[RMDB]
RNA sequence: GGGAACGACUCGAGUAGAGUCGAAAAGCGUGAGGGAUGGCGGCUAUAGGGUUGCAACCCUCUAUCAGUAGCGAUAUAUCGCGAGUAAAAGUAGCUACAGAAGAAGGGCAGGCCAACUACGUGCCAGAAUUUAUUAUAUAUUCGUAUAUAAUAAAUUAAAAGAAACAACAACAACAAC
Reactivity to 2A3 in 0.01 (KOAc 150mM, MgCl2 10mM, bicine 150mM(pH8.5), 24C), signal-to-noise 1, nucleotides 027 to 126: g020c010g000u060g070a020g010g000g030a060u030g100g010c030g000g000c040u070a060u150a220g060g070g000u020u010g010c030a040a200c000c000c010u000c000u000a150u030c020a000g010u020a000g000c010g010a000u000a000u000a060u170c040g030c080g130a050g060u130a000a020a050a040g000u010a010g000c000u030a010c000a030g030a080a000g000a010a090g090g000g000c050a010g010g120c000c000a010a030c030u030a080c060g000u030g000c000c000a000g100
Reactivity to DMS in 0.01 (KOAc 150mM, MgCl2 10mM, bicine 150mM(pH8.5), 24C), signal-to-noise 2, nucleotides 027 to 126: g010c040g000u000g010a060g000g000g030a060u020g010g020c060g000g010c020u010a080u040a090g000g010g000u000u010g030c100a110a120c000c000c020u010c000u010a040u020c020a070g020u000a010g000c000g010a090u050a060u030a100u020c040g000c180g000a160g040u010a030a090a100a100g010u000a160g010c000u000a000c000a060g020a030a060g000a050a050g000g010g030c060a040g000g000c050c010a040a090c070u000a040c080g010u000g010c010c010a190g000